Structure probing data (DMS and 2A3) for a 177-nucleotide construct. Source: RMDB library OK1LIB, as collected in RNAgym. 2A3 adducts were read by reverse transcription with SuperScript II with manganese. The reactions ran in a buffer of 150 mM KOAc, 10 mM MgCl2 and 150 mM bicine (pH 8.5), at 24 C.
RNA sequence: GGGAACGACUCGAGUAGAGUCGAAAAGUUGACUGCGAAAAGCAGUCAACAUGGCUGACACGUGUCCAAGUGAGCCAAGGACACUAAAGAUGCAGCGUUUGAGCGUGUCCCUCAAGCAGCUGCAUCAAUAGUACCUAGGCUUCGGCCUAGGUACUAUAAAAGAAACAACAACAACAAC
Reactivity to DMS in 0.01 (KOAc 150mM, MgCl2 10mM, bicine 150mM(pH8.5), 24C), signal-to-noise 3, nucleotides 027 to 126: g010u000u000g000a010c010u010g000c000g000a120a040a110a200g010c000a020g000u000c000a020a000c010a060u010g030g000c010u010g010a060c060a090c190g000u010g030u010c000c010a050a100g010u030g030a070g010c070c020a200a130g000g000a010c050a030c030u020a070a060a060g000a010u000g010c000a000g000c000g000u010u010u000g010a000g000c150g010u000g000u030c030c060c000u000c000a010a000g000c090a030g040c010u000g000c000a000u000c000a040
Reactivity to 2A3 in 0.01 (KOAc 150mM, MgCl2 10mM, bicine 150mM(pH8.5), 24C), signal-to-noise 5, nucleotides 027 to 126: g000u000u000g000a000c000u000g000c000g040a040a030a190a120g000c000a000g010u000c000a000a000c000a010u010g020g000c100u150g110a060c060a020c240g020u010g010u000c010c000a070a010g120u080g120a010g040c010c010a020a060g020g000a010c010a010c040u090a040a080a070g000a000u010g000c000a000g000c010g000u010u000u010g010a010g010c150g050u170g080u200c040c000c000u000c000a000a020g010c100a040g000c000u000g000c000a000u000c000a000